Structure probing data (2A3) for a 207-nucleotide construct.
[RMDB]
RNA sequence: GGGAACGACUCGAGUAGAGUCGAAAACAGGAGGAGAACCGCCUAAAGAGCGCAGGCGAUCCAGGCGCUGGGCUUCGGAUGAAGAGCAGGUGGAUCACCUAAUGUGCUUGUACAGAGUCCACGGUUCCGGUGUCGAUGCGGAGAGCGCUUGUGAAGCGCGGGAGAUAUGGUUCGCCAUAUCUCCCGCAAAAGAAACAACAACAACAAC
Reactivity to 2A3 in 0.01 (KOAc 150mM, MgCl2 10mM, bicine 150mM(pH8.5), 24C), signal-to-noise 1, nucleotides 027 to 156: c040a020g030g020a020g040g020a030g030a030a060c030c050g020c020c040u060a080a070a010g060a020g000c000g000c010a000g000g070c080g010a000u000c000c000a000g060g000c070g030c100u020g030g120g000c020u000u150c130g240g030a190u170g000a030a050g030a020g040c000a000g040g050u060g010g090a010u120c010a090c050c030u110a170a230u220g010u030g070c010u000u000g050u080a070c020a100g030a020g080u030c040c020a040c010g000g050u120u200c030c000g050g000u030g010u030c010g010a050u080g080c120g040g040a040g030a000g020c010g010c010u000u000g030u070g110a080a000g000c000

The 2A3 profile rests on 603 reads. The RNA was probed in 150 mM KOAc, 10 mM MgCl2 and 150 mM bicine (pH 8.5) at 24 C.